[RMDB]
RNA sequence: GGGAACGACUCGAGUAGAGUCGAAAACGAGAUCCAAGGGUGCUGGCCUUCCUUGCAGCGUGCGACUGCGCGGCGUGGAAGGUGAGAUCCAAAACAGACCGCUAAACAUGUAGAUCUGCCCGAAGAAGGCUUGCGGACGCGGGUUCAAUUCCCGCCACGGUUACAAUUGCUUCGGCAAUUGUAACCGAAAAGAAACAACAACAACAAC
Reactivity to 2A3 in 0.01 (KOAc 150mM, MgCl2 10mM, bicine 150mM(pH8.5), 24C), signal-to-noise 1, nucleotides 027 to 156: c030g010a030g000a060u030c010c020a050a070g070g010g010u110g130c030u030g050g000c000c000u030u030c010c010u080u250g000c010a000g030c040g030u050g070c130g150a120c110u300g020c020g010c000g000g070c000g000u010g000g000a000a020g000g000u040g000a010g000a020u030c020c030a020a020a020a020c020a000g020a000c010c000g020c040u020a010a000a130c050a100u100g040u240a050g000a030u000c010u090g010c010c030c000g030a040a040g050a020a000g000g000c000u020u090g070c030g000g000a020c050g000c000g000g000g000u000u000c010a030a000u010u030c020c000c000g000c000c000a010
Structure probing data (2A3) for a 207-nucleotide construct.
Conditions: 150 mM KOAc, 10 mM MgCl2 and 150 mM bicine (pH 8.5), 24 C.
Source: RMDB library RSTRND, as collected in RNAgym.
The 2A3 profile rests on 580 reads.